[RMDB]
RNA sequence: GGGAACGACUCGAGUAGAGUCGAAAAUAACGGAAAUCCGGUCUCGUUCGCCGCGAUGGUGGAUCUGCUUUCGCAGGCGGCCAAGGCACGUUCGAAGUCUGCUCUGCUGGAUAUCCGCGAGGGCAUACCUGUCCUUAAGAUUCGUCUUAAGGACAGGAAAAGAAACAACAACAACAAC
Reactivity to DMS in 0.01 (KOAc 150mM, MgCl2 10mM, bicine 150mM(pH8.5), 24C), signal-to-noise 6, nucleotides 027 to 126: u010a130a090c020g010g000a020a100a040u000c020c020g010g010u010c080u010c070g000u000u000c010g020c020c020g020c020g010a050u000g000g010u000g020g010a110u010c140u010g000c010u000u000u000c060g010c020a100g040g010c020g010g000c050c040a050a090g000g010c020a080c100g000u000u010c140g000a130a090g000u000c080u000g000c020u000c050u000g000c020u000g010g010a050u000a060u000c020c010g010c060g010a050g000g000g010c080a100u010a110
Reactivity to 2A3 in 0.01 (KOAc 150mM, MgCl2 10mM, bicine 150mM(pH8.5), 24C), signal-to-noise 4, nucleotides 027 to 126: u040a020a020c030g000g020a010a070a070u040c030c010g000g030u010c020u010c050g040u090u020c020g000c020c000g020c020g030a030u040g020g040u050g040g090a240u070c080u190g010c010u030u050u020c040g000c060a140g000g010c010g020g000c010c000a020a030g030g000c030a010c120g040u080u080c040g040a060a020g060u020c020u030g010c000u020c020u060g010c020u070g030g020a080u040a080u150c020c000g010c020g040a040g020g020g000c000a010u050a120